[RMDB]
RNA sequence: GGGAACGACUCGAGUAGAGUCGAAAAUUUCCCUCGGGUUUGAGCGGUCGAACCCAGAGGGGAGUGUGAUCCUGGUACCGCCGUAGAAACUGGAUUACGACGUCUACCCGGGAUUCAAACUCGGCCCCUCUCAGAGGUGACUCUGAGCGAAAGGUCUACUGAGUAUCUAGUUCGCUAGAUACUCAGUAAAAGAAACAACAACAACAAC
Reactivity to 2A3 in 0.01 (KOAc 150mM, MgCl2 10mM, bicine 150mM(pH8.5), 24C), signal-to-noise 2, nucleotides 027 to 156: u010u020u100c000c020c000u000c000g000g000g030u000u000u060g040a040g080c230g100g190u090c020g000a020a000c000c000c050a010g020a000g000g030g000g010a040g020u010g040u060g000a010u000c010c000u010g000g020u070a070c000c030g010c010c000g030u040a020g130a200a190a070c210u170g080g040a120u110u020a020c020g000a000c010g040u000c020u030a050c040c050c040g000g020g000a010u110u090c090a140a090a060c020u030c030g050g000c000c000c010c000u000c000u000c010a000g000a000g000g070u110g090a080c010u010c000u010g000a000g000c010g050a120a060a000g020g030u010c020u030
An RNA of 207 nucleotides, treated with 2A3 and read out base by base.
Reactivities are given for positions 27 through 156.
High 2A3 reactivity points to a flexible backbone, as in loops and unpaired stretches.
For 2A3 the reverse transcriptase was SuperScript II with manganese.
Conditions: 150 mM KOAc, 10 mM MgCl2 and 150 mM bicine (pH 8.5), 24 C.